Conditions: 150 mM KOAc, 10 mM MgCl2 and 150 mM bicine (pH 8.5), 24 C. The record gives the reactivity of an RNA of 177 nucleotides to 2A3 and DMS. High DMS reactivity at an A or C suggests that its Watson-Crick edge is free. The data come from the RNA Mapping Database (RMDB), library OK2TST. High 2A3 reactivity points to a flexible backbone, as in loops and unpaired stretches. Values cover nucleotides 27 to 126. For 2A3 the reverse transcriptase was SuperScript II with manganese.
[RMDB]
RNA sequence: GGGAACGACUCGAGUAGAGUCGAAAAUGAUGAGAAAACGUCGCAAGAGAAACUCACCUGGCUGAAUGUGAACGAUGCGCUUUCGAUUGAUGGUAAAACGGUGUUGUUCGCGGCGUUGACCGGCAGCGAGAGCAGGAUGAUUCGUCAUCCUGCUCUCAAAAGAAACAACAACAACAAC
Reactivity to 2A3 in 0.01 (KOAc 150mM, MgCl2 10mM, bicine 150mM(pH8.5), 24C), signal-to-noise 1, nucleotides 027 to 126: u080g060a040u100g020a100g070a130a100a010a020c010g000u040c010g030c060a110a040g080a030g080a230a110a000c000u010c030a060c000c000u080g090g000c000u110g070a040a070u110g060u040g060a060a060c050g040a060u090g000c060g000c090u080u110u020c060g230a300u050u230g030a060u030g050g040u070a040a090a040a110c020g000g000u030g000u090u120g040u080u090c000g010c000g010g000c000g000u000u010g060a010c000c000g060g020c040a020g030c060
Reactivity to DMS in 0.01 (KOAc 150mM, MgCl2 10mM, bicine 150mM(pH8.5), 24C), signal-to-noise 3, nucleotides 027 to 126: u000g010a140u020g020a100g010a100a130a060a030c040g040u000c010g010c050a210a170g010a150g000a190a080a070c020u000c040a010c010c010u000g010g070c050u010g000a150a060u010g000u020g030a080a030c060g040a100u010g010c070g020c070u000u000u000c010g010a210u000u000g000a080u000g000g010u000a050a040a060a160c160g000g010u000g010u020u000g020u010u000c040g010c010g000g000c020g000u000u000g030a100c050c030g030g010c060a040g010c210